[RMDB]
This 207-nucleotide RNA was probed chemically with 2A3.
Conditions: 150 mM KOAc, 10 mM MgCl2 and 150 mM bicine (pH 8.5), 24 C.
Values cover nucleotides 27 to 156.
RNA sequence: GGGAACGACUCGAGUAGAGUCGAAAAGACCGUGCCGACGAGAUCACCACCGCCCGGUUCCAGGCGGCCGACCUGCGGACGACGAGCAAGCCCGACCGCACCCCGGUGACCGAUGCCGACGUGGCCGUGGAGGACGCGGUGCGCGCGGAACUGGCCGCUAAGAUGAGCGAUUCGUCGCUCAUCUUAGAAAAGAAACAACAACAACAAC
Reactivity to 2A3 in 0.01 (KOAc 150mM, MgCl2 10mM, bicine 150mM(pH8.5), 24C), signal-to-noise 2, nucleotides 027 to 156: g010a030c030c020g000u060g030c020c000g200a190c030g020a050g030a220u070c030a030c050c000a030c020c000g020c060c020c020g060g000u030u030c030c030a050g000g060c000g000g020c030c000g030a060c010c010u030g010c000g050g020a060c020g050a010c000g010a030g130c040a100a000g030c000c050c040g030a040c010c010g000c010a050c020c070c010c020g000g010u000g040a080c020c040g070a090u120g040c000c000g020a150c050g010u130g000g040c000c020g000u110g010g070a130g030g110a080c090g060c000g040g010u130g030c020g050c000g030c000g000g010a020a050c030u030g030g000c000c020g000